The record gives the reactivity of an RNA of 177 nucleotides to 2A3 and DMS.
DMS adducts were read by reverse transcription with MarathonRT.
The reactions ran in a buffer of 150 mM KOAc, 10 mM MgCl2 and 150 mM bicine (pH 8.5), at 24 C.
Reactivities are rounded to 0.1 and cut off at 0 and 3.
High 2A3 reactivity points to a flexible backbone, as in loops and unpaired stretches.
RNA sequence: GGGAACGACUCGAGUAGAGUCGAAAAAAGGUCAAGUGCUUGGAGUGGUCCAGAUGCCUUUAUAGUGUAUUGUAAUUGGGAGCGGGAGCGUAAGUGUAGCCCUGGGUCAAGACUGUAAACACAUACGCCGUAGCAUAAAGUUCGCUUUAUGCUACGGAAAAGAAACAACAACAACAAC
Reactivity to 2A3 in 0.01 (KOAc 150mM, MgCl2 10mM, bicine 150mM(pH8.5), 24C), signal-to-noise 3, nucleotides 027 to 126: a000a000g060g030u080c040a050a040g040u000g090c040u090u080g060g010a070g020u090g040g050u050c000c020a020g030a140u050g040c000c000u120u160u080a200u130a060g100u110g060u060a080u080u160g060u070a070a140u130u080g040g010g030a060g010c060g010g000g000a050g000c030g030u040a060a040g050u060g040u080a020g000c020c000c000u030g040g000g000u020c000a010a010g020a030c070u050g040u180a020a130a000c060a000c000a070u150a080c040g020
Reactivity to DMS in 0.01 (KOAc 150mM, MgCl2 10mM, bicine 150mM(pH8.5), 24C), signal-to-noise 5, nucleotides 027 to 126: a070a070g010g010u000c050a070a110g010u000g010c040u010u000g010g010a080g040u000g010g020u000c040c050a080g000a100u000g010c030c020u000u000u010a070u010a080g010u010g020u010a080u000u000g020u010a070a080u010u000g020g000g000a090g030c050g010g010g000a080g030c070g000u010a040a070g010u000g000u000a080g020c030c020c010u000g010g010g010u000c050a040a060g010a100c090u000g020u010a040a080a050c120a040c110a090u000a060c220g020